The record gives the reactivity of an RNA of 177 nucleotides to DMS and 2A3. DMS adducts were read by reverse transcription with MarathonRT. The RNA was probed in 150 mM KOAc, 10 mM MgCl2 and 150 mM bicine (pH 8.5) at 24 C. 2A3 adducts were read by reverse transcription with SuperScript II with manganese.
RNA sequence: GGGAACGACUCGAGUAGAGUCGAAAACGGAAGUGCCGUUCUCGAACUGGACCGAUUGUUGCCUGAACAAUAUCAAUCUUCCCAGCUCAGAACGCACUUUCCUUAUCCCGACACCCCGACAAACAGUAGGUGCAACCUAAUUCGUUAGGUUGCACCUAAAAGAAACAACAACAACAAC
Reactivity to DMS in 0.01 (KOAc 150mM, MgCl2 10mM, bicine 150mM(pH8.5), 24C), signal-to-noise 1, nucleotides 027 to 126: c160g020g000a020a000g000u000g000c000c050g000u030u000c020u000c220g000a000a000c000u000g000g000a030c300c300g000a220u000u000g000u000u090g000c000c140u000g020a030a090c300a160a000u000a030u000c110a000a000u000c000u000u000c300c000c000a000g000c060u000c000a050g000a000a000c000g100c000a000c000u000u000u060c000c000u000u050a170u000c000c000c020g000a020c030a110c000c000c020c000g000a300c140a000a000a080c050a060g000u020
Reactivity to 2A3 in 0.01 (KOAc 150mM, MgCl2 10mM, bicine 150mM(pH8.5), 24C), signal-to-noise 3, nucleotides 027 to 126: c050g000g010a000a010g000u000g120c150c050g010u020u000c010u040c070g000a010a010c000u000g000g010a020c050c050g000a010u010u000g020u020u050g030c020c030u080g020a080a040c070a040a050u020a000u090c010a000a010u000c020u080u070c030c000c000a010g000c000u010c000a000g010a000a010c000g010c010a000c000u000u000u000c000c000u020u060a030u040c000c000c000g000a010c010a010c000c020c000c010g040a060c060a050a210a000c050a120g070u050